[RMDB]
RNA sequence: GGGAACGACUCGAGUAGAGUCGAAAACGUGGCAGCGGUGCAGCCCCGCACGGUGGUGGUGCUCCACAACGGCGCGCCGGUGCGCAUGCCGUGGCUGGGCAGGGUGAAGGCGGUGCUGGAGGCCUACGAGGAACGGGAGAUUCGUCUCCCGUUCCUCAAAAGAAACAACAACAACAAC
Reactivity to 2A3 in 0.01 (KOAc 150mM, MgCl2 10mM, bicine 150mM(pH8.5), 24C), signal-to-noise 1, nucleotides 027 to 126: c020g030u070g030g030c000a040g000c050g140g000u080g040c050a040g040c040c000c010c000g000c000a070c010g070g000u080g000g040u080g000g040u160g030c000u040c010c000a040c040a060a050c020g000g000c000g000c000g000c030c120g180g050u260g020c060g000c010a040u230g040c000c000g000u010g080g010c040u020g000g040g060c040a040g000g010g070u110g060a050a020g050g020c050g000g000u030g040c010u020g000g120a040g000g060c020c030u080a110c120
Reactivity to DMS in 0.01 (KOAc 150mM, MgCl2 10mM, bicine 150mM(pH8.5), 24C), signal-to-noise 1, nucleotides 027 to 126: c040g070u000g010g030c050a050g010c040g000g040u010g020c100a120g000c040c040c020c050g020c050a040c050g010g050u000g020g030u000g000g000u010g000c150u010c000c040a040c090a170a070c080g000g020c020g030c020g040c020c020g040g020u010g000c060g040c020a040u010g060c000c030g010u000g000g020c060u010g000g000g000c020a090g000g000g020u050g000a200a120g020g010c040g000g000u000g000c030u000g000g000a110g000g020c030c000u010a070c190
Structure probing data (2A3 and DMS) for a 177-nucleotide construct. Conditions: 150 mM KOAc, 10 mM MgCl2 and 150 mM bicine (pH 8.5), 24 C. For DMS, 1,184 sequencing reads were counted. 2A3 adducts were read by reverse transcription with SuperScript II with manganese. The data come from the RNA Mapping Database (RMDB), library OK2TST.